RNA sequence: GGGAACGACUCGAGUAGAGUCGAAAAUCCAGACUCCCGGUUCUGGUUAUGUCCGUGUCUCCCUAUCAGUUACUUCCGGUAACUACGAGUUUGUAGUGGCGUAAGUCUCGUCCUCAUAGGACUCCUCGUUAUGUAAAGCGUUCGCGCUUUACAUAACAAAAGAAACAACAACAACAAC
Reactivity to 2A3 in 0.01 (KOAc 150mM, MgCl2 10mM, bicine 150mM(pH8.5), 24C), signal-to-noise 2, nucleotides 027 to 126: u010c010c010a010g040a070c040u050c010c030c010g020g030u050u060c040u070g000g090u050u160a130u210g050u000c010c020g040u040g080u050c040u000c050c010c000u090a120u110c040a020g070u090u080a010c000u070u000c030c060g060g050u040a070a050c000u000a010c020g090a130g180u040u170u300g020u130a020g030u000g020g000c000g000u030a070a020g010u020c020u030c090g050u000c020c010u060c030a120u150a120g010g000a040c010u000c020c030u090c060
Reactivity to DMS in 0.01 (KOAc 150mM, MgCl2 10mM, bicine 150mM(pH8.5), 24C), signal-to-noise 3, nucleotides 027 to 126: u000c010c010a120g000a120c090u000c050c060c040g010g010u010u000c030u010g000g010u000u010a040u010g010u000c020c020g000u000g000u010c040u000c020c010c020u010a080u010c110a100g020u000u010a060c020u000u000c110c080g010g000u010a080a050c010u000a080c030g000a150g000u000u010u010g020u000a040g010u000g000g010c040g000u000a040a070g000u000c060u010c030g000u000c010c010u000c190a120u010a110g000g010a050c030u010c020c040u000c260
Structure probing data (2A3 and DMS) for a 177-nucleotide construct. It was measured as part of the RMDB library VIROID. In probing experiments dimethyl sulfate is read out at A N1 and C N3, which are open when not base-paired. As a SHAPE reagent, 2A3 marks flexible, mostly unpaired nucleotides at the ribose 2'-OH. The DMS profile rests on 3,572 reads. The reactions ran in a buffer of 150 mM KOAc, 10 mM MgCl2 and 150 mM bicine (pH 8.5), at 24 C.